[RMDB]
RNA sequence: GGGAACGACUCGAGUAGAGUCGAAAAGCUACCGCACUGGCCUGCUUCGCUCAGGCGUUUUGCGGUCAUCGUCGCGCUAUUAUGGAAGGGCCAGGUGGCCUGUGGUGGGGAACCAUCCUUACUAUCAUCACUGCGGAAUAUUCGUAUUCCGCAGUGAAAAAGAAACAACAACAACAAC
Reactivity to DMS in 0.01 (KOAc 150mM, MgCl2 10mM, bicine 150mM(pH8.5), 24C), signal-to-noise 3, nucleotides 027 to 126: g030c140u000a070c010c010g010c030a020c120u010g020g020c020c030u010g010c080u010u010c260g010c190u040c060a030g000g020c010g000u000u000u010u010g010c000g000g000u000c110a060u000c100g000u000c170g000c060g010c030u000a090u010u010a110u010g010g000a120a170g000g000g020c010c030a110g000g030u000g020g010c030c010u000g000u020g010g040u010g010g000g000g030a110a100c110c070a090u010c020c000u000u000a060c060u010a080u010c110a150
Reactivity to 2A3 in 0.01 (KOAc 150mM, MgCl2 10mM, bicine 150mM(pH8.5), 24C), signal-to-noise 2, nucleotides 027 to 126: g020c000u020a010c000c010g000c010a060c010u030g080g010c020c000u040g010c060u240u180c140g050c090u100c040a010g000g010c030g030u030u030u020u080g010c000g000g020u000c010a100u130c000g100u020c050g000c020g000c110u030a070u240u070a080u270g130g060a100a140g060g000g000c000c010a140g020g190u080g080g030c000c020u000g030u010g000g030u000g020g020g010g010a010a050c040c000a060u090c000c010u070u090a110c030u100a070u180c070a020